[RMDB]
RNA sequence: GGGAACGACUCGAGUAGAGUCGAAAAGUAGUAAAUCUUGUGGUGCACGGUCCAGUCCGCCCCCCGGUGCGGCCGGUCGUCCGCGGCAUCCGCGGCUCGGGCCUGGGUGUUGUGCAGCAGCUGGCCGAUGAAAAGUACACUUCGGUGUACUUUUCAUAAAAGAAACAACAACAACAAC
Reactivity to 2A3 in 0.01 (KOAc 150mM, MgCl2 10mM, bicine 150mM(pH8.5), 24C), signal-to-noise 4, nucleotides 027 to 126: g150u160a010g070u090a020a080a200u080c060u100u110g030u070g110g050u090g010c030a000c050g020g000u050c020c000a020g010u030c020c080g010c010c010c000c000c010c000g050g060u160g050c050g080g030c000c020g000g040u060c080g030u010c000c000g020c010g000g000c060a060u110c060c010g020c040g000g020c020u050c080g080g050g010c010c020u010g050g000g000u080g080u150u080g030u070g020c030a050g000c010a010g020c000u030g010g010c030c000g010
Reactivity to DMS in 0.01 (KOAc 150mM, MgCl2 10mM, bicine 150mM(pH8.5), 24C), signal-to-noise 3, nucleotides 027 to 126: g000u020a060g010u020a050a070a110u010c070u020u010g000u010g000g010u000g000c060a100c040g010g020u020c030c030a020g010u000c050c070g020c010c040c050c020c010c020g020g000u010g020c020g020g000c010c040g000g000u010c170g010u060c080c010g020c030g000g000c170a090u020c000c000g010c080g020g010c040u020c080g000g000g000c040c000u000g000g000g000u000g000u020u000g020u020g000c130a090g000c060a120g030c000u010g010g010c000c010g010